[RMDB]
RNA sequence: GGGAACGACUCGAGUAGAGUCGAAAAAGGCCGAAGUGGAGAAGGGUUCCAUAACAAUGGAAUUCAUUUAUGGGUGAGUCGAUCCUAAGGUCUGGGUUAACUCUCUCUAAUAAGCUUACUAGGUGCACCUAAUCCAGAUCUUCGGAUCUGGAUUAGGAAAAGAAACAACAACAACAAC
Reactivity to DMS in 0.01 (KOAc 150mM, MgCl2 10mM, bicine 150mM(pH8.5), 24C), signal-to-noise 2, nucleotides 027 to 126: a040g000g000c000c020g020a090a060g020u000g000g000a070g000a120a110g010g000g020u000u000c000c000a000u000a160a140c300a060a120u030g000g000a030a000u000u010c020a030u030u000u010a040u010g000g000g000u000g000a030g000u010c040g010a020u000c000c000u000a070a130g060g020u030c160u000g000g000g050u000u000a110a070c050u000c000u000c000u030c010u000a040a000u020a050a060g020c020u010u010a020c020u000a100g000g010u000g010c090a170
Reactivity to 2A3 in 0.01 (KOAc 150mM, MgCl2 10mM, bicine 150mM(pH8.5), 24C), signal-to-noise 5, nucleotides 027 to 126: a000g060g000c020c000g020a110a020g040u060g070g090a070g040a120a150g010g020g000u000u000c000c000a010u040a040a100c160a110a030u020g010g010a000a000u010u010c020a040u030u090u080a120u190g020g000g000u040g010a010g010u040c030g020a010u020c000c000u050a080a040g230g090u040c080u030g000g020g000u000u030a020a010c000u000c000u000c000u000c000u010a060a040u060a190a050g020c000u050u020a040c010u030a040g040g000u030g080c010a010

This 177-nucleotide RNA was probed chemically with DMS and 2A3. It was measured as part of the RMDB library RFM100. Conditions: 150 mM KOAc, 10 mM MgCl2 and 150 mM bicine (pH 8.5), 24 C. For DMS the reverse transcriptase was MarathonRT. Values cover nucleotides 27 to 126.